[RMDB]
RNA sequence: GGGAACGACUCGAGUAGAGUCGAAAACAAUUGAGCGUCGCACACACACAGUCUAAGUCUGACACUGACAGAGCCUAAACCGCUCUGUCAGUGUGCGAGAUAUCGUUCUUAAUGUGAGCAGAGGAAAUAUGUGAAAUACCUUCGGGUAUUUCACAUAAAAAGAAACAACAACAACAAC
Reactivity to DMS in 0.01 (KOAc 150mM, MgCl2 10mM, bicine 150mM(pH8.5), 24C), signal-to-noise 4, nucleotides 027 to 126: c050a080a110u020u000g010a060g020c050g030u010c030g010c040a070c060a060c040a050c070a080c130a050g010u000c040u010a070a130g000u010c040u010g010a080c010a040c000u000g020a020c010a000g010a010g010c000c010u010a030a080a140c300c300g000c000u000c000u000g000u000c000a010g000u000g010u000g030c070g000a030g000a090u010a120u010c050g000u000u000c010u010u010a080a090u010g000u010g010a070g020c010a070g000a080g010g010a030a050a150
Reactivity to 2A3 in 0.01 (KOAc 150mM, MgCl2 10mM, bicine 150mM(pH8.5), 24C), signal-to-noise 2, nucleotides 027 to 126: c020a050a140u100u150g030a030g100c020g070u020c020g010c020a000c010a010c020a000c000a000c000a010g000u000c040u110a180a020g060u020c060u070g040a020c000a010c030u000g010a010c020a010g000a000g020c000c000u040a050a050a020c010c030g020c010u000c000u000g000u000c000a000g000u000g010u000g000c000g060a030g000a010u070a020u080c010g030u030u040c000u060u120a170a090u100g040u050g050a040g010c050a020g020a050g100g030a040a110a070
Structure probing data (DMS and 2A3) for a 177-nucleotide construct. It was measured as part of the RMDB library M2PK90. The RNA was probed in 150 mM KOAc, 10 mM MgCl2 and 150 mM bicine (pH 8.5) at 24 C. 2A3 adducts were read by reverse transcription with SuperScript II with manganese. For DMS the reverse transcriptase was MarathonRT. For 2A3, 2,536 sequencing reads were counted. For DMS, 3,392 sequencing reads were counted.